[RMDB]
RNA sequence: GGGAACGACUCGAGUAGAGUCGAAAAGAUAUGGACCUGAAGAGCGAAGAACACAGGUCGGAAACGACUGUGGGAGCUUUAAGGGUCCUAAGUCAAAUCCCUCAUGCUGUUCGCAGCAUGAGGGAAACUAGUUUCUACUGUUCGCAGUAGAAACUAGAAAAGAAACAACAACAACAAC
Reactivity to DMS in 0.01 (KOAc 150mM, MgCl2 10mM, bicine 150mM(pH8.5), 24C), signal-to-noise 4, nucleotides 027 to 126: g000a000u000a040u010g000g000a020c000c010u000g010a230a150g010a010g010c000g010a090a120g000a130a210c020a000c010a010g000g020u010c000g010g000a020a020a030c010g000a040c000u010g020u000g000g000g010a010g010c000u000u000u000a080a300g000g000g000u000c000c000u000a000a050g000u000c010a090a150a150u000c000c000c000u000c000a000u000g000c000u000g010u000u010c210g020c000a020g000c000a010u000g000a000g000g000g000a000a010a080
Reactivity to 2A3 in 0.01 (KOAc 150mM, MgCl2 10mM, bicine 150mM(pH8.5), 24C), signal-to-noise 5, nucleotides 027 to 126: g000a000u000a010u050g000g000a000c010c020u070g060a140a060g010a030g050c020g210a300a040g000a030a000c010a000c010a040g260g300u070c000g000g000a000a000a010c000g000a000c000u010g010u010g010g000g000a000g000c000u110u130u100a090a100g030g020g010u000c000c000u000a000a000g000u000c010a000a000a230u020c020c000c000u010c000a000u000g000c010u020g070u100u130c300g010c170a010g000c000a000u000g010a000g000g000g000a020a000a000